[RMDB]
RNA sequence: GGGAACGACUCGAGUAGAGUCGAAAAGGCUGGUGCCGGAGCCGAUACCGGAAUACGAGACCUCAUGUGCGGUCGAAUGCACUGAAGUACGAAAGUACGAAGAGGUCAGACCGAGGACCGAGACUCGAUAUGCUCGGUAGAUGGAGCUUUACAUCAAACUAAAUGAUCGGUUCGCCGAUCAUUUAGUAAAAGAAACAACAACAACAAC
Reactivity to DMS in 0.01 (KOAc 150mM, MgCl2 10mM, bicine 150mM(pH8.5), 24C), signal-to-noise 1, nucleotides 027 to 156: g030g030c080u000g000g000u020g020c010c050g000g000a100g010c020c030g010a150u000a050c020c020g000g000a080a150u000a140c080g010a210g000a000c020c030u020c000a220u010g020u030g000c000g010g020u020c210g040a090a070u000g000c010a020c020u000g000a130a220g010u000a000c020g000a190a100a130g010u000a010c010g000a120a100g010a100g000g010u000c010a140g000a090c060c010g010a120g070g000a100c050c010g020a110g020a120c040u010c060g000a090u000a040u000g000c010u000c000g040g000u000a040g020a180u000g010g000a110g010c080u000u000u000a100c060a030u050c020a130a170
Reactivity to 2A3 in 0.01 (KOAc 150mM, MgCl2 10mM, bicine 150mM(pH8.5), 24C), signal-to-noise 2, nucleotides 027 to 156: g030g030c020u080g000g090u110g070c010c000g030g000a020g000c080c050g040a020u120a120c020c000g010g040a060a010u120a080c050g010a030g050a080c020c000u000c000a020u150g010u050g010c010g000g060u160c080g000a070a030u190g000c020a000c020u100g020a140a030g000u000a010c000g020a140a030a040g020u010a000c030g010a080a020g040a010g000g000u000c000a000g020a010c020c000g010a030g000g040a010c000c030g000a000g020a050c020u010c060g080a140u040a010u130g080c020u010c000g000g000u000a000g010a030u040g040g050a030g030c030u040u050u100a040c050a090u040c070a070a150